[RMDB]
RNA sequence: GGGAACGACUCGAGUAGAGUCGAAAAGUGUGUGUUUGUGUGUGUGUGUAUAUGCUUGUCAGUGCAUGCACGUGUAUGUCUGGGAGUACAAAUGGGUGCGACUGGUUGUAGGGAACUAGCUAUGUGCGCAUAGGUUGACGUUCGCGUCAACCUAUGCAAAAGAAACAACAACAACAAC
Reactivity to DMS in 0.01 (KOAc 150mM, MgCl2 10mM, bicine 150mM(pH8.5), 24C), signal-to-noise 1, nucleotides 027 to 126: g010u000g000u010g020u000g030u000u000u000g020u000g010u000g030u010g020u010g040u010g010u000a050u000a110u010g000c050u000u010g010u010c040a060g020u000g020c030a020u010g020c000a030c070g010u010g010u000a040u000g000u000c060u000g050g000g000a070g000u010a040c210a060a060a120u010g010g010g010u010g010c060g010a110c070u010g010g020u010u010g000u000a090g000g000g040a050a050c140u000a050g020c060u020a070u000g020u000g000c210

Source: RMDB library RFMREP, as collected in RNAgym. Structure probing data (DMS) for a 177-nucleotide construct. Conditions: 150 mM KOAc, 10 mM MgCl2 and 150 mM bicine (pH 8.5), 24 C.